RNA sequence: GGGAACGACUCGAGUAGAGUCGAAAAACGUCACGAGAACGUCCGGGGAGGAGUCCUCGUCCAUUUAUAAACGUGACGAUUGUAACCAUUACCACGACCAUUCCGGGGCUGGAGGUCUAUCCUCGGCCUACAGGCAAUCGUUCGCGAUUGCCUGUAGAAAAGAAACAACAACAACAAC
Reactivity to DMS in 0.01 (KOAc 150mM, MgCl2 10mM, bicine 150mM(pH8.5), 24C), signal-to-noise 1, nucleotides 027 to 126: a170c020g010u020c020a040c010g020a180g000a050a060c110g000u000c030c000g000g000g010g010a060g010g020a200g010u010c000c000u000c000g020u010c070c010a130u000u010u000a110u010a090a100a130c020g010u000g000a040c000g000a090u000u000g020u000a080a130c070c010a130u010u000a150c050c030a100c090g000a050c060c040a100u010u020c050c040g000g010g000g000c050u010g020g040a020g000g010u000c160u000a170u000c000c030u000c030g000g000c140
Reactivity to 2A3 in 0.01 (KOAc 150mM, MgCl2 10mM, bicine 150mM(pH8.5), 24C), signal-to-noise 1, nucleotides 027 to 126: a000c000g000u000c000a000c030g120a060g020a220a020c030g070u020c070c020g000g000g000g050a040g060g060a100g190u050c000c000u000c010g000u000c030c000a000u040u200u030a220u060a070a160a010c040g000u040g000a000c000g000a080u000u120g050u050a020a110c010c000a020u090u140a050c040c010a070c040g040a010c030c020a080u140u080c060c030g000g000g060g000c050u080g120g020a050g030g040u060c070u040a060u050c000c000u000c000g030g000c020
Chemical mapping of a 177-nucleotide RNA with DMS and 2A3.
For 2A3, 1,170 sequencing reads were counted.
For 2A3 the reverse transcriptase was SuperScript II with manganese.
Source: RMDB library OK2TST, as collected in RNAgym.
Values cover nucleotides 27 to 126.
High 2A3 reactivity points to a flexible backbone, as in loops and unpaired stretches.
The RNA was probed in 150 mM KOAc, 10 mM MgCl2 and 150 mM bicine (pH 8.5) at 24 C.